This 207-nucleotide RNA was probed chemically with 2A3. The reactions ran in a buffer of 150 mM KOAc, 10 mM MgCl2 and 150 mM bicine (pH 8.5), at 24 C. Values cover nucleotides 27 to 156.
[RMDB]
RNA sequence: GGGAACGACUCGAGUAGAGUCGAAAAGAACUUUGGCCGGCUCGGAAUAGAAUCAGGGGGUGCAAACUGCCCACUGGCAGAAAGGAUUAUAGCAAAUGCGUACCCUAAUGCAAUACAGCCCGGCCAACAUAGACUACUCUAUUCGUAGAGUAGUCAACUAGACCCUACUGUUCGCAGUAGGGUCUAGAAAAGAAACAACAACAACAAC
Reactivity to 2A3 in 0.01 (KOAc 150mM, MgCl2 10mM, bicine 150mM(pH8.5), 24C), signal-to-noise 1, nucleotides 027 to 156: g030a080a020c010u000u000u020g000g000c000c000g000g000c000u000c040g000g090a140a010u230a300g050a040a120u150c020a050g000g000g010g040g000u070g000c020a130a130a110c060u070g000c000c030c050a240c160u080g010g000c000a010g010a050a090a000g090g010a020u050u180a100u300a170g030c070a080a110a050u160g010c050g000u050a030c000c000c000u030a080a030u090g030c030a040a030u060a060c000a020g050c070c020c000g020g000c000c000a000a000c000a000u060a030g000a000c000u000a000c000u000c000u000a060u040u090c170g100u040a000g000a000g010u010a000g000u000c000a000a000